[RMDB]
RNA sequence: GGGAACGACUCGAGUAGAGUCGAAAAUCUGGAAGGCGACGGCCUCUCGAUCGAGACCGCUACCAACGUCGACGGCGGUCGCCCGUACGUCGUCCGGUUCACCGACGACCUGCAAGGCGUGGACGUCCCGACCAUGACGGUCGAUACGGACGGUCUGGGAUAAGUAGGUCUUCGGACCUACUUAUCCAAAAGAAACAACAACAACAAC
Reactivity to 2A3 in 0.01 (KOAc 150mM, MgCl2 10mM, bicine 150mM(pH8.5), 24C), signal-to-noise 2, nucleotides 027 to 156: u030c020u100g040g000a120a000g010g010c030g000a020c080g160g000c000c040u080c050u070c080g030a040u160c070g020a020g100a060c060c040g000c000u050a040c060c030a100a130c060g090u080c030g020a000c020g030g020c000g040g020u030c000g000c000c000c020g030u010a060c050g030u000c030g060u030c100c010g030g000u080u160c140a070c090c010g030a040c000g040a030c030c020u060g030c100a130a040g030g000c020g040u080g000g050a050c000g080u100c030c000c000g010a000c000c010a070u100g210a160c110g070g060u000c000g000a000u050a150c020g000g020a000c040g070g100u000c040u000g010
The record gives the reactivity of an RNA of 207 nucleotides to 2A3.
Values cover nucleotides 27 to 156.
The 2A3 profile rests on 654 reads.